Chemical mapping of a 177-nucleotide RNA with 2A3. The data come from the RNA Mapping Database (RMDB), library RFM100.
[RMDB]
RNA sequence: GGGAACGACUCGAGUAGAGUCGAAAAACGACCUAUUACGAUAGGUCGAUUUGGUGGGACCUGAUGCUGCUGGUGUGCUGUAAAUAAGUGCCUAGCACAUCACGUAGGCACCAGGUGUCACCAGGAACGACAUGGCUGGUUUCGACCAGCCAUGUCGAAAAGAAACAACAACAACAAC
Reactivity to 2A3 in 0.01 (KOAc 150mM, MgCl2 10mM, bicine 150mM(pH8.5), 24C), signal-to-noise 2, nucleotides 027 to 126: a000c000g010a000c000c000u040a050u000u030a030c210g010a000u000a000g000g000u000c000g000a000u010u040u030g000g000u000g000g000g050a000c010c000u000g000a010u020g000c010u000g030c000u000g000g060u030g010u010g000c020u000g130u180a060a100a200u260a100a160g140u200g240c000c050u070a040g000c040a000c000a000u000c000a000c070g030u010a140g060g140c000a000c010c000a000g010g000u080g200u000c000a000c000c000a000g040g040a080a010